Conditions: 150 mM KOAc, 10 mM MgCl2 and 150 mM bicine (pH 8.5), 24 C. Chemical mapping of a 177-nucleotide RNA with DMS and 2A3. For 2A3 the reverse transcriptase was SuperScript II with manganese. Source: RMDB library TTRDES, as collected in RNAgym. For DMS the reverse transcriptase was MarathonRT.
RNA sequence: GGGAACGACUCGAGUAGAGUCGAAAAGAUAUGGAUGCAACAUGAGCAACAGCUCAAAUCGGAAACGAUUUGAGACAUGCUUGCAUGUUCGCAUCCUAAGUCAAACUACAAACUUCGGUUUGUAGAAGUCGUAACAAGGGUUCGCCCUUGUUACGACAAAAGAAACAACAACAACAAC
Reactivity to DMS in 0.01 (KOAc 150mM, MgCl2 10mM, bicine 150mM(pH8.5), 24C), signal-to-noise 1, nucleotides 027 to 126: g020a090u000a300u020g000g000a000u000g010c000a010a010c000a020u000g010a070g030c040a090a050c120a170g040c010u000c000a000a000a000u000c000g030g010a120a060a140c010g000a020u000u000u000g000a010g010a030c050a160u000g000c040u000u030g030c000a000u010g000u000u010c180g010c010a000u000c000c000u000a020a090g000u000c030a100a110a250c000u000a000c000a020a020a020c000u010u010c170g010g000u000u000u000g010u000a000g010a080a070
Reactivity to 2A3 in 0.01 (KOAc 150mM, MgCl2 10mM, bicine 150mM(pH8.5), 24C), signal-to-noise 2, nucleotides 027 to 126: g020a010u060a040u140g000g030a000u000g010c000a010a010c000a000u030g030a070g220c020a030a110c040a170g030c010u000c000a010a000a000u000c020g010g060a040a020a060c010g020a000u000u020u030g010a000g110a010c010a080u110g020c020u080u300g080c020a000u030g020u010u040c080g010c010a010u000c010c000u000a080a000g000u010c010a040a040a110c010u000a000c010a000a010a020c000u070u090c300g120g000u040u000u040g000u020a020g010a040a030